RNA sequence: GGGAACGACUCGAGUAGAGUCGAAAACUGCAAGAUCGACGGCAAGCCGUCGCGCUACCGCAGCGAGCCGCAGCGUCAGCACUUGGCUGCCGCGCCGGCCGCAUAGCUUGCUACGAGUGCACGCAUGCCGUCCAUAGCUAUUCGUAGCUAUGGACGGAAAAGAAACAACAACAACAAC
Reactivity to DMS in 0.01 (KOAc 150mM, MgCl2 10mM, bicine 150mM(pH8.5), 24C), signal-to-noise 4, nucleotides 027 to 126: c080u000g010c070a090a120g020a080u010c080g010a130c020g010g020c050a030a090g000c030c070g000u010c160g030c040g010c130u000a090c190c130g000c010a120g000c020g000a130g000c020c010g030c200a230g010c020g010u000c020a040g010c010a160c300u010u010g000g020c000u000g010c030c010g000c010g010c300c020g000g000c030c050g020c060a110u000a080g010c030u010u010g010c020u000a070c100g010a060g000u000g000c020a040c100g010c050a130u020g010
Reactivity to 2A3 in 0.01 (KOAc 150mM, MgCl2 10mM, bicine 150mM(pH8.5), 24C), signal-to-noise 4, nucleotides 027 to 126: c030u040g000c040a040a030g070a270u050c020g150a170c030g050g000c050a070a020g020c040c040g190u220c060g030c020g000c070u200a170c090c080g000c010a010g000c010g030a040g020c020c020g000c010a060g010c000g010u020c010a000g010c000a050c280u120u180g300g000c020u010g000c000c010g000c000g000c050c010g020g010c030c000g020c000a060u110a010g030c010u000u060g000c000u010a050c080g050a010g030u040g000c030a020c080g060c030a060u160g040
Notes
Chemical mapping of a 177-nucleotide RNA with DMS and 2A3. Conditions: 150 mM KOAc, 10 mM MgCl2 and 150 mM bicine (pH 8.5), 24 C.